[RMDB]
Annotation: Chemical mapping of a 177-nucleotide RNA with DMS and 2A3. The reactions ran in a buffer of 150 mM KOAc, 10 mM MgCl2 and 150 mM bicine (pH 8.5), at 24 C.
RNA sequence: GGGAACGACUCGAGUAGAGUCGAAAAGGCGAGGGUCCUCAGUUCUCUCUAUUCUUUCUUUUUGAAAGAGGAGACUGCUGGACCAAACGCCCGAACCGGGAUGAGCCGCAUGCCGGGCGGGAGGGACGACUCCAGUAUAGUUCGCUAUACUGGAGUCAAAAGAAACAACAACAACAAC
Reactivity to DMS in 0.01 (KOAc 150mM, MgCl2 10mM, bicine 150mM(pH8.5), 24C), signal-to-noise 2, nucleotides 027 to 126: g000g000c030g010a150g010g000g010u000c010c020u000c010a020g020u020u000c030u000c000u000c140u000a210u010u010c000u000u000u000c000u000u000u010u020u010g000a000a000a010g010a090g000g000a010g000a030c000u000g010c160u000g000g000a030c010c010a040a050a080c020g000c000c000c030g000a060a100c040c020g020g000g020a060u020g000a160g010c130c210g010c050a080u020g020c050c020g020g000g030c050g000g010g000a070g000g010g010a210c290
Reactivity to 2A3 in 0.01 (KOAc 150mM, MgCl2 10mM, bicine 150mM(pH8.5), 24C), signal-to-noise 2, nucleotides 027 to 126: g030g010c060g040a090g160g030g010u000c000c010u040c010a060g020u270u090c030u000c020u000c050u110a250u260u000c010u080u020u000c000u090u300u100u100u190g000a010a000a010g000a020g000g000a000g000a000c000u000g030c050u020g010g000a000c000c000a030a000a000c000g000c000c000c000g010a070a020c000c000g030g000g030a020u020g020a020g220c080c060g120c190a030u110g120c030c010g000g020g070c050g030g020g050a110g030g010g020a020c060